[RMDB]
RNA sequence: GGGAACGACUCGAGUAGAGUCGAAAAAGCAGACAUUUGCUACAAGUUCGUCCUUUGGGAUUAUGAACGUAGCAAUAUUUAUGGUACUGCUACUAUUGGUGUAUGUAAGUACACUGAUAUUGAUGUUAUACAAGCGUCUUCGGACGCUUGAAAAGAAACAACAACAACAAC
Reactivity to 2A3 in 0.01 (KOAc 150mM, MgCl2 10mM, bicine 150mM(pH8.5), 24C), signal-to-noise 3, nucleotides 027 to 129: a000g000c000a000g020a020c000a040u070u000u000g020c000u000a000c010a250a050g010u000u000c010g000u070c010c000u100u080u270g050g010g000a000u040u070a070u300g000a000a000c010g000u000a000g000c000a000a000u090a140u020u230u020a110u110g120g000u120a210c010u020g000c000u010a040c040u010a010u000u000g000g000u010g030u000a000u000g230u170a060a190g030u000a000c000a000c000u000g010a000u000a010u000u300g140a130u170g030u150u070a100u000a100
Reactivity to DMS in 0.01 (KOAc 150mM, MgCl2 10mM, bicine 150mM(pH8.5), 24C), signal-to-noise 3, nucleotides 027 to 129: a110g010c000a020g040a060c010a130u030u000u020g020c050u000a000c090a080a180g020u000u000c030g020u000c020c000u000u130u000g060g020g000a010u020u010a050u060g020a010a010c030g020u050a060g010c020a000a110u040a050u010u000u000a050u090g010g040u050a110c010u030g020c020u000a150c020u010a000u010u050g010g050u020g020u030a010u030g030u100a100a100g010u040a040c010a030c000u000g020a010u020a000u000u000g050a100u010g000u100u050a190u070a000
The record gives the reactivity of an RNA of 170 nucleotides to 2A3 and DMS. For DMS, 10,972 sequencing reads were counted. For 2A3, 2,901 sequencing reads were counted.